An RNA of 177 nucleotides, treated with DMS and read out base by base.

RNA sequence: GGGAACGACUCGAGUAGAGUCGAAAAUGCUUGUGCCCGAACCGUUGCUGCUGGAGAACACUUCGAAAAACCGGCUGCGCUCUGCGAAGGCGACCAGCCACGGGGCUCCGAUGACCGGGGCAUAGCCCCGCUCCCACUGAUUCGUCAGUGGGAGCGGAAAAGAAACAACAACAACAAC
Reactivity to DMS in 0.01 (KOAc 150mM, MgCl2 10mM, bicine 150mM(pH8.5), 24C), signal-to-noise 4, nucleotides 027 to 126: u010g010c050u020u000g050u020g020c010c000c030g000a130a140c070c040g010u000u010g010c100u000g010c010u020g000g010a100g000a100a100c100a090c040u000u000c040g010a040a070a060a150a100c130c080g010g000c030u000g010c080g000c030u010c040u030g020c120g010a080a080g010g000c020g000a140c100c030a040g010c000c030a070c060g020g010g000g020c020u000c030c040g010a130u010g010a110c190c030g010g000g000g000c040a030u000a030g000c020c160
Reactivities are given for positions 27 through 126. For DMS, 3,246 sequencing reads were counted. In probing experiments dimethyl sulfate is read out at A N1 and C N3, which are open when not base-paired. It was measured as part of the RMDB library OK2TST. The reactions ran in a buffer of 150 mM KOAc, 10 mM MgCl2 and 150 mM bicine (pH 8.5), at 24 C.